[RMDB]
RNA sequence: GGGAACGACUCGAGUAGAGUCGAAAACCGUAGGGUAAUCGAGAUCGAAGAACUAUGGAGGGUCAAUUCGAAAGAGUUGACCUACCCACCCAUAGGGAGAUCACAGACAAUUACCCUAAACGGAAAAGCUAGUAAAAACUUCGGUUUUUACUAGCAAGAGAACAUUUUAGUUCGCUAAAAUGUUCUCAAAAGAAACAACAACAACAAC
Reactivity to DMS in 0.01 (KOAc 150mM, MgCl2 10mM, bicine 150mM(pH8.5), 24C), signal-to-noise 2, nucleotides 027 to 156: c000c000g000u000a030g010g000g010u000a010a000u000c010g000a090g010a020u000c000g000a130a180g020a300a220c000u000a010u000g000g000a220g010g000g030u010c000a020a050u000u010c000g000a170a100a300g000a080g020u000u000g010a020c010c000u000a000c010c010c100a300c160c000c000a020u010a010g010g010g010a260g040a020u000c030a120c080a140g000a210c120a000a020u000u000a000c000c030c000u000a010a050a060c010g010g000a040a030a140a280g030c010u010a010g030u000a000a020a000a000a010c000u000u000c300g130g010u020u000u000u000u000a000c000u000a030g010c000a030a030
Reactivity to 2A3 in 0.01 (KOAc 150mM, MgCl2 10mM, bicine 150mM(pH8.5), 24C), signal-to-noise 3, nucleotides 027 to 156: c000c000g000u010a020g000g020g000u010a010a020u040c050g020a040g010a180u010c010g110a300a060g000a030a010c010u020a000u010g000g010a010g000g000g000u010c000a010a000u010u010c010g030a090a070a040g010a060g000u000u000g000a000c050c000u010a050c010c020c010a030c000c000c000a010u000a010g000g010g000a010g000a010u020c000a010c050a090g080a020c030a050a020u000u010a010c000c000c000u010a040a100a000c010g040g000a030a070a060a090g010c000u020a000g000u000a000a000a010a000a000c000u050u160c250g020g000u000u010u000u000u000a000c000u000a000g000c010a000a000
Chemical mapping of a 207-nucleotide RNA with DMS and 2A3.
It was measured as part of the RMDB library RNAMAK.
For 2A3 the reverse transcriptase was SuperScript II with manganese.
The reactions ran in a buffer of 150 mM KOAc, 10 mM MgCl2 and 150 mM bicine (pH 8.5), at 24 C.